[RMDB]
RNA sequence: GGGAACGACUCGAGUAGAGUCGAAAAACGCCCGCGUUGUCGCCGCGGAUCAGGUUGGCAGGCGUCAGGCACCGCGCCAGCCGCAGGGAGCUCGCGCCGCGCGUCCGGCGCUGCAUGGUGACGCCCGUCCGAUAGGAUCCUUCGGGAUCCUAUCGGAAAAAGAAACAACAACAACAAC
Reactivity to DMS in 0.01 (KOAc 150mM, MgCl2 10mM, bicine 150mM(pH8.5), 24C), signal-to-noise 1, nucleotides 027 to 126: a250c200g000c120c020c020g000c050g000u010u000g020u010c010g060c230c020g000c140g000g020a040u010c100a130g030g020u000u000g000g000c000a180g000g000c000g020u000c080a110g030g000c060a050c140c140g000c000g010c010c030a060g000c050c000g010c070a090g000g000g020a070g000c140u010c150g050c040g020c040c050g000c100g000c020g000u000c020c040g000g000c010g000c010u000g000c030a100u000g000g000u000g000a030c090g000c000c000c060g000